[RMDB]
RNA sequence: GGGAACGACUCGAGUAGAGUCGAAAAGAAAGAAAGAAAGAAGAGAAUCAUCUCUCCCAGAUAAUGGCACUCUCAAACAAGUUUCCAAAUUGUUUGAAAGGCUAUUUCUUGGUCAGAUGACUCUCAAUGAGAAUCCGGUUUUCGAACCGGAUUCUCAAAAAGAAACAACAACAACAAC
Reactivity to 2A3 in 0.01 (KOAc 150mM, MgCl2 10mM, bicine 150mM(pH8.5), 24C), signal-to-noise 1, nucleotides 027 to 126: g180a010a160a000g070a110a010a000g100a030a160a010g160a100a000g030a010g010a010a130u000c000a010u000c000u020c000u000c010c000c000a000g040a000u230a040a030u000g000g000c000a080c300u050c010u000c000a000a000a000c010a010a000g010u130u090u080c020c060a070a100a180u070u010g040u020u020u020g000a000a000a000g030g020c010u010a000u040u000u010c000u010u010g020g000u000c020a000g000a000u000g000a000c000u000c000u000c010a020a060

The record gives the reactivity of an RNA of 177 nucleotides to 2A3. 2A3 adducts were read by reverse transcription with SuperScript II with manganese. Source: RMDB library RFM100, as collected in RNAgym.